[RMDB]
RNA sequence: GGGAACGACUCGAGUAGAGUCGAAAAACGUACCUAUUCGUAGGUACGUGAUUAAAAGCUAGUCAUAUAAAAGGAAGACUAGCAAUUUAGAAUCCUAUAUUAAUAGCACAUGUUUCGACAUGUGCAAGUAAAUCGUGAUGUUCGCAUCACGAUUUACAAAAGAAACAACAACAACAAC
Reactivity to DMS in 0.01 (KOAc 150mM, MgCl2 10mM, bicine 150mM(pH8.5), 24C), signal-to-noise 2, nucleotides 027 to 126: a010c010g020u000a000c000c000u000a040u000u010c200g020u000a010g000g010u000a000c000g030u010g000a040u000u000a020a010a070a300g020c000u000a010g010u020c000a090u000a200u010a050a130a180a060g000g000a160a250g000a020c000u000a000g000c000a010a020u010u000u010a100g000a090a100u010c000c000u000a060u010a140u010u010a080a100u030a190g000c000a010c000a010u000g010u010u010u010c100g040a050c000a000u000g000u000g000c000a010a040
Reactivity to 2A3 in 0.01 (KOAc 150mM, MgCl2 10mM, bicine 150mM(pH8.5), 24C), signal-to-noise 2, nucleotides 027 to 126: a010c000g000u000a000c000c000u010a030u040u070c240g000u030a010g000g000u000a010c000g000u000g000a000u000u090a010a030a030a000g010c000u000a010g000u000c040a080u160a040u090a250a230a040a040g180g030a050a160g000a000c000u000a000g000c000a000a020u020u010u040a020g020a030a060u000c000c000u070a080u020a030u240u230a160a190u070a140g000c000a000c010a010u010g020u030u070u050c240g050a010c000a010u020g000u020g050c000a010a010